Source: RMDB library OK3TST, as collected in RNAgym. Chemical mapping of a 207-nucleotide RNA with 2A3. Values cover nucleotides 27 to 156. For 2A3, 536 sequencing reads were counted.
RNA sequence: GGGAACGACUCGAGUAGAGUCGAAAAUCGGGAUAUCCACGCGUCUCCUUUUCUAACAUAGUCGAUAAUAUGGGAGGAACUGCAUCGACGACUGAUUCCUCGCGACAAUCUAGGUUAGAGUUAGCCAUCUCAACGACCCAGAUCCUACUGGAUGGGAGUCCAGUGUUGGUUUCGACCAACACUGGACAAAAGAAACAACAACAACAAC
Reactivity to 2A3 in 0.01 (KOAc 150mM, MgCl2 10mM, bicine 150mM(pH8.5), 24C), signal-to-noise 1, nucleotides 027 to 156: u100c010g010g000g030a040u020a000u180c060c010a070c020g030c030g040u000c000u020c010c030u080u090u040u040c010u030a040a010c010a100u150a030g010u060c000g120a030u100a230a040u080a300u240g090g040g000a020g100g030a020a060c040u020g030c050a040u200c130g150a100c040g140a120c030u070g070a300u000u040c000c000u010c040g100c030g040a040c000a020a110u060c040u090a090g000g090u000u030a020g000a010g080u100u040a040g080c030c020a070u030c030u000c050a050a080c020g030a040c000c000c000a020g000a150u000c010c010u040a140c030u090g000g000a010u010g000g030g020a010